[RMDB]
RNA sequence: GGGAACGACUCGAGUAGAGUCGAAAAGGAAUGUGCUUCGGCACAUUCCAAAAGAAAGGCAGACGGCGAACGCCAAACGCUGACGAACCAAAAACGAAGGUAAAACCCACCGGUUCGCCGGUGGGAAGAAUAGUGACUGAUUCGUCAGUCACUAUUCAAAAGAAACAACAACAACAAC
Reactivity to DMS in 0.01 (KOAc 150mM, MgCl2 10mM, bicine 150mM(pH8.5), 24C), signal-to-noise 4, nucleotides 027 to 126: g000g010a020a000u000g030u000g000c000u000u010c170g020g030c000a010c000a000u000u000c000c000a030a050a090a140g010a090a090a160g010g000c010a030g020a300c230g010g020c010g010a140a090c180g010c010c020a050a090a120c130g000c020u000g000a160c090g000a100a100c020c020a030a080a090a040a080c130g010a100a080g020g010u000a040a090a110a080c000c000c000a000c010c000g000g030u000u010c210g020c000c020g030g000u000g020g000g000a010a020
Reactivity to 2A3 in 0.01 (KOAc 150mM, MgCl2 10mM, bicine 150mM(pH8.5), 24C), signal-to-noise 2, nucleotides 027 to 126: g020g000a010a000u030g000u010g000c020u060u110c220g050g050c000a000c000a010u000u010c000c000a010a000a000a000g000a020a040a000g020g000c020a000g000a060c050g030g030c020g050a250a080c120g000c030c000a050a100a000c040g020c040u030g030a030c030g030a020a050c020c000a090a080a050a040a040c160g060a130a010g100g000u140a070a070a020a070c000c000c000a010c000c000g020g060u020u030c290g010c070c000g000g000u050g000g020g000a000a000